Conditions: 150 mM KOAc, 10 mM MgCl2 and 150 mM bicine (pH 8.5), 24 C. An RNA of 170 nucleotides, treated with DMS and 2A3 and read out base by base. It was measured as part of the RMDB library 15KLIB. For 2A3, 5,355 sequencing reads were counted.

RNA sequence: GGGAACGACUCGAGUAGAGUCGAAAACUCAGUGCUCUUACUCUUUCCUAUAAAGAGGAGACUGCUGGACUCGCCGCCCAAGCCCGAGCAUGGGCCCCAGUUCCGAACGAAGAGACCGCCGGGGAAGAAACGAGCGUGUUCGCACGCUCGAAAAGAAACAACAACAACAAC
Reactivity to DMS in 0.01 (KOAc 150mM, MgCl2 10mM, bicine 150mM(pH8.5), 24C), signal-to-noise 2, nucleotides 027 to 129: c050u010c010a030g060u010g030c170u140c020u000u000a090c070u050c030u010u050u050c110c120u060a110u070a060a060a020g010a020g050g050a090g030a060c070u000g040c090u000g000g180a090c110u000c110g030c030c090g000c060c030c010a100a110g030c000c000c020g020a110g020c120a080u010g070g010g020c010c020c030c020a060g000u070u010c040c050g060a150a150c040g030a080a010g020a020g010a030c000c090g050c060c020g000g000g000g000a070a040g000a050a050a120
Reactivity to 2A3 in 0.01 (KOAc 150mM, MgCl2 10mM, bicine 150mM(pH8.5), 24C), signal-to-noise 3, nucleotides 027 to 129: c030u020c000a000g010u050g070c030u030c000u030u150a300c000u060c010u020u020u040c060c080u100a130u180a230a040a000g030a000g000g000a000g020a020c000u000g010c020u010g000g020a030c010u020c100g040c030c050g040c000c000c000a010a030g020c010c030c020g050a060g000c070a030u060g010g030g000c000c000c000c030a060g030u090u020c030c000g020a040a030c020g030a040a050g020a010g020a040c020c030g000c030c000g000g000g000g000a040a000g010a000a060a000